An RNA of 207 nucleotides, treated with 2A3 and read out base by base. Values are in units of 0.01, from 0 to 300, in steps of 10. Conditions: 150 mM KOAc, 10 mM MgCl2 and 150 mM bicine (pH 8.5), 24 C. As a SHAPE reagent, 2A3 marks flexible, mostly unpaired nucleotides at the ribose 2'-OH.
[RMDB]
RNA sequence: GGGAACGACUCGAGUAGAGUCGAAAAGUUUACGCUCCAAGAUCGGUGGAUAGCAGCCCUAUCAAUUUCUAGGAGAACUGUGCUAUGUUUAGAAGAUUAGGUAGUCUCUAAACAGAACAAUUUACCUCAUACGUUAGGACGUUCGCGUCCUAACGAACCAGACAGCCAUGUUCGCAUGGCUGUCUGGAAAAGAAACAACAACAACAAC
Reactivity to 2A3 in 0.01 (KOAc 150mM, MgCl2 10mM, bicine 150mM(pH8.5), 24C), signal-to-noise 1, nucleotides 027 to 156: g000u020u010u160a100c060g000c050u030c000c000a020a060g020a020u060c070g080g300u060g060g000a010u010a010g050c060a000g020c000c000c010u030a070u000c020a060a140u020u230u110c050u050a010g000g000a030g070a060a050c080u100g010u050g100c140u020a020u090g000u000u000u000a050g000a260a030g000a010u040u090a000g030g030u020a000g050u060c000u000c000u000a000a000a000c000a040g050a060a050c170a050a020u070u130u040a000c000c000u020c030a100u120a070c000g000u000u000a000g000g000a000c000g030u090u010c300g000c000g050u010c030c000u000a000a000c000g000a000a000